[RMDB]
Chemical mapping of a 207-nucleotide RNA with 2A3 and DMS. For 2A3 the reverse transcriptase was SuperScript II with manganese. Values are in units of 0.01, from 0 to 300, in steps of 10. Values cover nucleotides 27 to 156. The data come from the RNA Mapping Database (RMDB), library M2RFPK. High DMS reactivity at an A or C suggests that its Watson-Crick edge is free. As a SHAPE reagent, 2A3 marks flexible, mostly unpaired nucleotides at the ribose 2'-OH. The 2A3 profile rests on 4,101 reads. The reactions ran in a buffer of 150 mM KOAc, 10 mM MgCl2 and 150 mM bicine (pH 8.5), at 24 C.
RNA sequence: GGGAACGACUCGAGUAGAGUCGAAAAGUCCAAAAUUGAUUCGGCGGCCCUGUCAUGAGGCCGAAACGAAGGCACGUACCCCUUCGAAUGGCGUCGGUGAGUCAGCGGCUAUAUAUGCGCCUAAUGCUAAAGUCGUGCUGGUUCGCCAGCACGACAACAAUGCUUUUAUGUUCGCAUAAAAGCAUUGAAAAGAAACAACAACAACAAC
Reactivity to 2A3 in 0.01 (KOAc 150mM, MgCl2 10mM, bicine 150mM(pH8.5), 24C), signal-to-noise 5, nucleotides 027 to 156: g060u040c010c010a020a010a070a100u120u140g020a040u080u030c050g010g020c000g010g010c020c000c000u010g070u030c050a090u110g020a030g020g000c000c010g010a000a000a010c010g000a010a000g010g030c090a010c190g210u270a140c040c030c020c010u010u020c020g050a060a080u130g020g010c060g130u010c020g020g050u050g040a050g100u110c010a000g000c060g080g000c050u020a010u030a000u010a020u190g080c020g020c010c010u050a040a030u130g040c070u130a140a090a050g000u000c000g000u000g000c000u000g020g030u040u070c130g030c080c000a000g000c000a000c000g000a000c010a000a000
Reactivity to DMS in 0.01 (KOAc 150mM, MgCl2 10mM, bicine 150mM(pH8.5), 24C), signal-to-noise 3, nucleotides 027 to 156: g000u020c020c030a090a040a120a130u010u000g000a180u000u010c040g000g000c030g010g000c000c010c000u020g030u030c150a100u010g000a070g030g010c000c010g000a020a050a130c050g000a070a020g000g010c030a150c130g030u000a170c050c060c000c020u000u000c020g010a130a120u000g020g020c030g020u010c020g000g020u010g020a120g010u000c030a090g020c060g040g000c050u010a080u000a140u000a120u000g000c000g040c030c010u000a070a110u000g020c030u010a060a080a130g010u000c000g040u000g010c020u000g010g010u000u000c300g000c020c000a010g000c000a020c000g010a000c020a010a070